[RMDB]
This 177-nucleotide RNA was probed chemically with DMS and 2A3.
The DMS profile rests on 2,410 reads.
2A3 is a SHAPE reagent: it acylates the 2'-hydroxyl of flexible nucleotides of all four kinds.
2A3 adducts were read by reverse transcription with SuperScript II with manganese.
RNA sequence: GGGAACGACUCGAGUAGAGUCGAAAAGUCGACGGGCUCCGCGUCGGAGAGUUCGAUGGUGUCGGCGUAGUACUUGCCGAUGCCAUCGAGGGUAGGCCCGCGCUGCACGAUCACGUUGGUCGGCGCCGGCCUCAUCAGAGUUCGCUCUGAUGAGGCCAAAAGAAACAACAACAACAAC
Reactivity to DMS in 0.01 (KOAc 150mM, MgCl2 10mM, bicine 150mM(pH8.5), 24C), signal-to-noise 2, nucleotides 027 to 126: g000u030c030g020a060c020g050g000g050c030u000c090c100g010c060g000u020c100g020g020a080g000a130g030u020u000c020g020a000u000g000g010u000g010u010c000g000g040c020g070u040a070g000u060a080c300u030u000g030c000c000g000a020u000g000c000c000a000u000c000g000a020g010g020g060u010a080g050g010c000c010c080g030c090g000c030u030g010c060a080c050g000a130u000c150a140c220g030u010u020g010g000u000c000g020g000c020g030c000c140
Reactivity to 2A3 in 0.01 (KOAc 150mM, MgCl2 10mM, bicine 150mM(pH8.5), 24C), signal-to-noise 4, nucleotides 027 to 126: g110u090c010g000a180c010g030g010g010c020u060c070c030g060c050g130u120c110g080g020a130g000a000g120u060u000c000g010a000u000g000g010u000g000u010c000g000g010c060g040u070a040g120u090a190c140u110u190g000c000c000g000a000u020g000c000c000a000u000c010g000a010g000g040g000u070a090g030g030c000c000c010g010c010g010c020u040g000c040a060c130g050a070u100c040a080c300g100u090u200g060g010u020c010g000g010c000g030c030c030